[RMDB]
RNA sequence: GGGAACGACUCGAGUAGAGUCGAAAAACACUUUAGCUGUGUGACCUGUGCAGGCCACUCAGCAUCACUGUGCCAUCAUCCAAUCCAGCCCAUGUCAUAAUGUUGCUGGGAUGGUUAAAUGAGAUCAUGAGUGUAAGGACACUUAUAGUGCCUGGUACAAAAUAGUACCAUUCGUGGUACUAUUUUGAAAAGAAACAACAACAACAAC
Reactivity to DMS in 0.01 (KOAc 150mM, MgCl2 10mM, bicine 150mM(pH8.5), 24C), signal-to-noise 7, nucleotides 027 to 156: a050c020a040c040u000u000u000a100g030c020u000g020u000g010u000g010a010c000c010u000g020u010g030c170a070g030g010c000c000a020c010u000c010a010g000c000a090u000c050a040c050u000g010u000g020c010c030a110u000c030a140u000c100c070a100a160u010c020c010a060g010c000c180c000a060u000g020u000c210a150u010a100a070u010g010u000u010g030c020u000g010g010g020a030u000g010g020u010u000a040a050a070u000g000a080g010a100u000c070a120u000g010a070g030u000g020u010a100a160g010g010a070c010a020c020u000u000a090u000a070g020u000g010c010c010u000g010g010u000a130
Reactivity to 2A3 in 0.01 (KOAc 150mM, MgCl2 10mM, bicine 150mM(pH8.5), 24C), signal-to-noise 9, nucleotides 027 to 156: a000c050a010c020u110u140u150a040g000c010u010g000u000g000u010g030a020c000c000u090g110u260g230c210a030g010g000c010c010a000c010u030c010a010g000c010a020u030c010a010c030u120g030u070g050c020c010a020u030c000a030u030c040c050a060a090u020c000c000a010g010c030c070c010a020u040g070u120c030a050u080a260a020u080g060u100u130g010c010u010g020g000g020a010u020g000g000u020u050a060a150a070u090g010a050g010a060u110c050a060u140g070a010g040u030g020u050a070a070g050g050a040c010a010c050u140u160a100u100a220g030u030g020c000c010u030g020g020u080a040